RNA sequence: GGGAACGACUCGAGUAGAGUCGAAAACCGAGGUGACGCUCGUCCUCCUUCGGAUGCCCAGGUCGGACCGCGAGGAGGUGGAGAUGCCAUGCCGACCCGAAGAGGAAAGAAGGACGCGAGACGCAAACAUUAUAAAAUGGUUCGCCAUUUUAUAAUGAAAAGAAACAACAACAACAAC
Reactivity to 2A3 in 0.01 (KOAc 150mM, MgCl2 10mM, bicine 150mM(pH8.5), 24C), signal-to-noise 5, nucleotides 027 to 126: c010c000g010a070g010g070u100g020a060c040g010c040u020c020g060u060c010c030u000c010c010u020u010c010g070g070a130u230g060c010c010c000a010g030g000u010c010g010g010a050c030c020g020c040g040a070g050g040a060g070g000u050g020g030a160g000a070u170g050c010c010a050u110g010c010c000g010a010c000c020c020g060a100a020g090a060g020g010a030a030a030g010a010a010g000g000a000c010g000c010g020a020g020a030c010g000c030a050a050a020
Reactivity to DMS in 0.01 (KOAc 150mM, MgCl2 10mM, bicine 150mM(pH8.5), 24C), signal-to-noise 8, nucleotides 027 to 126: c010c010g010a100g020g020u000g010a130c080g020c040u000c010g010u000c040c090u000c010c010u010u000c010g010g010a210u010g010c030c010c020a090g000g010u000c030g010g000a180c040c090g000c140g010a120g010g010a100g010g020u000g010g010a140g010a080u010g020c030c030a080u010g000c010c010g000a040c010c000c040g000a090a080g000a100g000g010a050a130a160g000a040a020g010g020a040c300g000c030g000a050g000a110c040g020c060a110a080a200